[RMDB]
RNA sequence: GGGAACGACUCGAGUAGAGUCGAAAAGGGGUCUGCUUGGAUUUAUCUCCUGAGCCCAUCUACCCACCCUAUACUGAAGCCUCCACGGUAUAGGAGGAUGGGUGUAAGGAGAUUGUCAGCAGACGGAGGCACCCAAACCGAGUAUUCGUACUCGGAACCGUACCUAACGGUUCGCCGUUAGGUACGGAAAAGAAACAACAACAACAAC
Reactivity to 2A3 in 0.01 (KOAc 150mM, MgCl2 10mM, bicine 150mM(pH8.5), 24C), signal-to-noise 2, nucleotides 027 to 156: g040g020g000g000u020c000u010g010c040u050u160g220g100a220u230u220u080a050u040c000u020c000c000u020g010a050g030c010c000c000a010u020c030u120a100c140c100c000a020c000c020c000u000a000u030a010c000u010g070a190a020g030c020c010u070c030c030a020c000g010g010u000a000u010a000g000g000a020g000g000a000u000g010g000g040u010g000u140a000a010g000g000a010g000a000u000u010g000u000c020a000g000c010a000g000a000c000g000g000a030g000g010c020a090c010c010c030a010a000a060c000c000g000a000g020u000a020u080u220c240g020u100a120c000u010c010g000g000a000a020